RNA sequence: GGGAACGACUCGAGUAGAGUCGAAAACUUGGGAUUACAGGCAUACACCACCACCUGCAGCUAAUUUUUGUAUUUUUAGUACAGACGGGUUUCACCAUGUUGGCCAGGCUAGUCUUGAACUCCUGACCUCAAGUGAUGUGCCCACCUCGGCCUCCCACCUUUUAAUAGGAUUCGUCCUAUUAAAAGGAAAAGAAACAACAACAACAAC
Reactivity to DMS in 0.01 (KOAc 150mM, MgCl2 10mM, bicine 150mM(pH8.5), 24C), signal-to-noise 2, nucleotides 027 to 156: c070u010u000g030g000g010a140u000u000a070c050a030g030g040c030a090u010a070c100a040c020c010a080c020c020a030c050c020u000g020c050a080g030c040u010a030a040u000u020u010u000u020g030u000a040u000u010u000u000u000a060g020u000a060c070a050g020a060c100g010g020g000u010u000u000c030a040c010c020a090u000g020u010u010g020g020c000c000a040g020g050c010u000a020g000u000c040u000u000g030a040a120c010u000c000c010u000g000a040c020c010u000c060a050a110g010u000g010a050u000g010u000g000c040c010c010a070c050c020u000c020g010g010c010c030u000c000c000c010a200
Reactivity to 2A3 in 0.01 (KOAc 150mM, MgCl2 10mM, bicine 150mM(pH8.5), 24C), signal-to-noise 6, nucleotides 027 to 156: c020u050u050g030g000g060a060u090u140a110c050a050g010g020c010a030u050a090c040a050c060c020a010c010c000a020c000c030u020g010c040a050g010c030u040a070a090u060u090u110u150u150g090u100a150u040u150u020u060u120a020g010u030a020c020a040g050a040c050g040g010g000u070u100u080c030a040c030c020a060u120g040u080u050g080g000c020c010a010g000g040c080u110a020g020u020c020u100u240g040a050a020c030u030c050c000u020g020a050c000c000u030c020a050a040g010u020g040a050u030g030u070g030c000c010c000a040c000c020u050c050g040g000c000c010u020c010c000c000a050
Structure probing data (DMS and 2A3) for a 207-nucleotide construct.
For 2A3, 6,077 sequencing reads were counted.
2A3 adducts were read by reverse transcription with SuperScript II with manganese.
It was measured as part of the RMDB library OK3TST.